[RMDB]
RNA sequence: GGGAACGACUCGAGUAGAGUCGAAAAUGGUUUUGGUCCUUGGUAUUUUGUUUUAAUCCUUGUAAAAUCAUUUCAUAUUGAAAUUGGUCCCUAUAAUAUUCAUUUUAGUCCUCGUUUUGAGGGACUAUAUGGUACCAUAGUUCGCUAUGGUACCAUAAAAAGAAACAACAACAACAAC
Reactivity to DMS in 0.01 (KOAc 150mM, MgCl2 10mM, bicine 150mM(pH8.5), 24C), signal-to-noise 3, nucleotides 027 to 126: u010g000g010u000u010u000u000g000g010u020c160c030u010u010g000g020u040a030u000u010u010u020g010u010u010u030u000a050a070u020c010c000u010u010g000u030a030a020a020a030u000c020a020u000u000u000c020a070u010a070u010u020g010a010a050a140u000u000g010g000u000c000c000c000u010a080u030a070a060u020a080u010u010c030a070u010u030u020u000a020g010u000c000c000u010c050g030u010u000u030u040g020a060g010g000g000a010c000u010a040
Reactivity to 2A3 in 0.01 (KOAc 150mM, MgCl2 10mM, bicine 150mM(pH8.5), 24C), signal-to-noise 5, nucleotides 027 to 126: u050g010g010u020u030u020u030g060g040u120c020c000u000u020g020g000u100a070u030u070u030u050g230u070u110u050u140a040a040u030c010c010u010u020g090u060a010a040a010a020u020c010a000u000u020u000c020a020u040a140u120u150g050a020a070a020u050u030g040g000u010c010c010c000u060a050u020a150a070u080a120u060u140c030a020u020u070u050u060a000g010u000c000c000u030c060g130u100u050u150u200g130a120g000g000g000a000c000u000a000
The data come from the RNA Mapping Database (RMDB), libraries RFM100 and RFMREP. Structure probing data (DMS and 2A3) for a 177-nucleotide construct. 2A3 adducts were read by reverse transcription with SuperScript II with manganese. Conditions: 150 mM KOAc, 10 mM MgCl2 and 150 mM bicine (pH 8.5), 24 C.